[RMDB]
RNA sequence: GGGAACGACUCGAGUAGAGUCGAAAAGAGUCAGUGAGACUCAGUGAGACACAGAGUCUGUGACAGACUGUCUGUGUGUCUGAGUGAGUCACAGACACUGUGUGUCUCAGACAGACACAGUGACUGAACCAUUCAUUCCUUUCGAGGAAUGAAUGGUAAAAGAAACAACAACAACAAC
Reactivity to DMS in 0.01 (KOAc 150mM, MgCl2 10mM, bicine 150mM(pH8.5), 24C), signal-to-noise 9, nucleotides 027 to 126: g000a060g010u010c000a080g000u000g010a090g010a020c010u000c090a150g020u000g010a030g000a020c000a010c000a030g010a280g000u000c000u000g010u010g000a050c050a100g010a040c010u000g000u000c010u000g020u000g030u000g010u000c010u000g000a050g010u010g010a200g000u000c010a040c000a010g010a030c020a130c150u000g000u000g020u000g000u000c010u000c030a040g000a080c070a030g000a030c010a010c010a110g000u000g000a080c010u000g010a160
Reactivity to 2A3 in 0.01 (KOAc 150mM, MgCl2 10mM, bicine 150mM(pH8.5), 24C), signal-to-noise 6, nucleotides 027 to 126: g100a010g020u010c030a010g050u040g190a100g000a040c000u000c010a020g200u020g030a030g000a010c000a000c000a010g090a020g140u000c000u020g040u040g040a020c020a020g080a030c000u030g040u050c010u040g170u020g010u010g020u060c010u000g020a040g040u040g040a030g010u010c000a000c000a010g030a010c040a050c220u050g010u000g000u000g010u020c000u010c010a000g010a010c010a000g010a010c000a000c000a020g040u020g020a020c010u030g040a030